RNA sequence: GGGAACGACUCGAGUAGAGUCGAAAACACCUAACGUUCGCGUUAGGUGAAAGAUGCAAGUAAAGCUGGAUCGACGCAUCAUGAAGAACCAGGAGAAAUAAAAAACGACAGGGUUCGCCCUGUCGAAGCUCUGUAGUACGUUCGCGUACUACAGAGCAAAAGAAACAACAACAACAAC
Reactivity to DMS in 0.01 (KOAc 150mM, MgCl2 10mM, bicine 150mM(pH8.5), 24C), signal-to-noise 1, nucleotides 027 to 126: c020a020c000c000u000a010a010c000g010u000u010c280g020c010g020u000u000a000g000g000u030g020a010a050a070g000a040u000g000c070a060a180g030u000a100a090a130g030c080u000g020g000a070u000c020g030a220c090g000c010a010u000c050a080u000g060a110a080g030a070a070c050c020a050g000g000a170g020a040a040a040u020a010a000a060a100a080a130c020g030a000c020a020g010g010g040u000u010c190g000c000c000c000u000g020u020c000g020a020a090
Reactivity to 2A3 in 0.01 (KOAc 150mM, MgCl2 10mM, bicine 150mM(pH8.5), 24C), signal-to-noise 2, nucleotides 027 to 126: c000a010c000c000u000a000a000c010g000u030u070c260g000c000g130u000u020a010g000g000u010g010a000a000a000g030a000u030g000c030a000a120g050u250a210a020a080g080c030u050g040g050a070u040c030g040a010c070g000c000a070u030c020a050u120g030a080a120g000a010a040c020c010a030g070g130a130g120a030a110a020u230a060a080a020a000a020a000c000g000a000c000a000g050g020g010u010u050c150g080c010c000c000u010g020u020c000g000a000a000
Overview: Chemical mapping of a 177-nucleotide RNA with DMS and 2A3. Reactivities are rounded to 0.1 and cut off at 0 and 3. For DMS, 636 sequencing reads were counted. Values cover nucleotides 27 to 126. The RNA was probed in 150 mM KOAc, 10 mM MgCl2 and 150 mM bicine (pH 8.5) at 24 C. High 2A3 reactivity points to a flexible backbone, as in loops and unpaired stretches.